[RMDB]
RNA sequence: GGGAACGACUCGAGUAGAGUCGAAAAUGAGAAUACUUUUAGUACAAGCGAGUACACGCAGUAUACUGCCACUUGUGUGAGAAUACUUUUAGUACAAGCGAGUACACGCAGUAUACUGCCACUUGUGGUCGCUACAGCUGUUCGCAGCUGUAGCGACAAAAGAAACAACAACAACAAC
Reactivity to 2A3 in 0.01 (KOAc 150mM, MgCl2 10mM, bicine 150mM(pH8.5), 24C), signal-to-noise 2, nucleotides 027 to 126: u140g000a000g080a100a000u110a230c060u150u250u180u140a130g080u150a010c060a140a000g000c000g050a030g040u050a060c030a000c080g000c010a000g000u000a000u000a000c000u000g020c000c030a020c030u020u040g010u020g030u080g010a110g120a130a000u110a040c020u030u050u060u300a000g000u000a000c040a070a000g000c000g070a000g010u110a010c000a000c000g010c000a000g000u000a000u000a000c000u000g010c000c000a000c020u030u010g030u010g010

This 177-nucleotide RNA was probed chemically with 2A3. Values cover nucleotides 27 to 126. The reactions ran in a buffer of 150 mM KOAc, 10 mM MgCl2 and 150 mM bicine (pH 8.5), at 24 C. It was measured as part of the RMDB library OK1LIB.